RNA sequence: GGGAACGACUCGAGUAGAGUCGAAAAGAUAUGGAGCUUUGUGGACAUGCUUUGAGUGUCGGAAACGACAUGUAAGAGCAACAGCCACACGGAGCUCCUAAGUCAAAGGACCCCUUCGGGGGUCCAAGCUAUGGUAUAUCUUCGGAUAUACCAUAGCAAAAGAAACAACAACAACAAC
Reactivity to 2A3 in 0.01 (KOAc 150mM, MgCl2 10mM, bicine 150mM(pH8.5), 24C), signal-to-noise 3, nucleotides 027 to 126: g020a010u110a040u180g000g000a010g000c010u020u060u050g050u010g020g000a040c080a220u300g020c010u090u050u050g110a110g030u010g000u010c000g000g010a080a050a020c020g020a010c000a010u070g080u190a050a000g010a000g040c030a070a060c030a080g060c040c000a070c000a000c110g040g010a000g000c000u000c000c000u000a060a000g020u020c040a190a020a140g000g000a010c020c010c020c080u020u160c300g100g000g040g030g000u030c000c020a000a010
Reactivity to DMS in 0.01 (KOAc 150mM, MgCl2 10mM, bicine 150mM(pH8.5), 24C), signal-to-noise 5, nucleotides 027 to 126: g010a050u010a300u000g000g000a010g000c000u010u000u000g030u000g010g000a040c040a270u000g010c000u000u010u010g010a200g010u000g010u000c000g010g000a110a100a210c000g020a010c000a000u000g000u030a280a070g000a010g010c010a020a080c260a130g010c020c020a120c010a020c260g010g000a010g010c000u010c000c010u010a010a070g000u000c020a090a160a220g010g000a020c000c000c000c000u000u010c260g030g020g030g010g010u000c000c010a010a040

Notes: This 177-nucleotide RNA was probed chemically with 2A3 and DMS. The RNA was probed in 150 mM KOAc, 10 mM MgCl2 and 150 mM bicine (pH 8.5) at 24 C. 2A3 adducts were read by reverse transcription with SuperScript II with manganese. Reactivities are given for positions 27 through 126. The data come from the RNA Mapping Database (RMDB), library TTRDES. The 2A3 profile rests on 7,706 reads. DMS adducts were read by reverse transcription with MarathonRT.